[RMDB]
This 177-nucleotide RNA was probed chemically with DMS and 2A3. The DMS profile rests on 6,452 reads. For 2A3, 12,464 sequencing reads were counted. 2A3 adducts were read by reverse transcription with SuperScript II with manganese.
RNA sequence: GGGAACGACUCGAGUAGAGUCGAAAAGAUAUGGAUCAUGGCAAGCUUUUGACGAACCUCGGAAACGAGUGUUCGAUAAGCUUGCAUGAUCCUAAGUCAAAGUUCGGAAUGUUCGCAUUCCGAACAACGAUCAUAAACUCUUCGGAGUUUAUGAUCGAAAAGAAACAACAACAACAAC
Reactivity to DMS in 0.01 (KOAc 150mM, MgCl2 10mM, bicine 150mM(pH8.5), 24C), signal-to-noise 5, nucleotides 027 to 126: g010a040u000a300u010g010g000a010u000c000a010u010g010g010c000a000a000g000c000u000u000u010u010g010a210c170g010a000a000c000c000u000c000g020g000a100a110a190c010g000a000g010u010g010u000u000c000g000a090u000a010a010g010c010u000u000g000c000a000u000g000a000u000c000c000u000a010a050g010u000c050a090a160a120g000u010u000c000g000g010a010a010u000g020u010u010c260g000c000a020u000u000c000c000g010a010a000c000a050a080
Reactivity to 2A3 in 0.01 (KOAc 150mM, MgCl2 10mM, bicine 150mM(pH8.5), 24C), signal-to-noise 4, nucleotides 027 to 126: g040a010u070a040u160g000g010a000u000c010a010u070g300g080c010a020a000g000c020u060u110u250u300g210a120c030g000a000a010c000c000u010c010g030g030a070a070a040c010g020a010g010u300g010u040u000c000g000a000u010a010a000g000c000u000u000g000c000a000u000g000a000u000c000c000u000a020a000g000u000c060a200a040a070g000u000u010c000g000g020a010a000u010g030u050u080c220g000c170a000u000u000c000c010g000a000a000c000a000a010